[RMDB]
RNA sequence: GGGAACGACUCGAGUAGAGUCGAAAAUUUUGGCUAGAGGUAUAAGUUGCUGCUCCAUUUCUUUUGCUGACCAUCUGUAGUAUGUUAUUUGAUCAUUGCCUCUUGAGGGUUGAUUUUGGUUCAAUUAGUUUUCUUCUUUUGUCCUUGACAAUGUGCCCAUCAAGGCAUGUUUCGACAUGCCUUGAUGAAAAGAAACAACAACAACAAC
Reactivity to DMS in 0.01 (KOAc 150mM, MgCl2 10mM, bicine 150mM(pH8.5), 24C), signal-to-noise 1, nucleotides 027 to 156: u000u010u020u010g030g030c020u000a060g020a040g040g040u000a070u010a100a170g020u000u000g020c020u000g000c020u020c090c050a110u010u000u000c010u020u000u000u000g010c040u010g010a070c030c000a090u010c050u010g040u000a090g010u010a060u000g020u000u000a100u000u010u000g010a100u010c020a080u010u000g010c030c050u000c030u000u000g030a110g000g040g000u000u000g020a070u010u000u000u020g020g030u010u010c040a030a070u000u000a050g010u000u000u010u000c040u010u000c030u000u000u010u010g020u000c030c060u000u010g020a080c060a050a090u000g010u000g010c050c090
Reactivity to 2A3 in 0.01 (KOAc 150mM, MgCl2 10mM, bicine 150mM(pH8.5), 24C), signal-to-noise 2, nucleotides 027 to 156: u040u040u080u040g050g000c020u030a000g010a020g080g070u130a130u030a160a050g040u060u070g020c020u000g010c000u030c010c030a060u030u080u060c030u010u120u080u080g020c000u010g000a060c030c010a100u080c030u070g050u040a050g030u040a080u100g050u040u070a120u080u110u100g040a040u050c040a030u020u090g050c000c000u040c050u050u070g040a080g040g030g000u010u090g040a040u030u050u050u040g030g000u080u000c000a050a070u030u020a050g060u010u080u050u000c000u020u000c000u040u070u020u120g030u000c060c010u070u120g000a010c010a020a100u040g060u060g020c010c000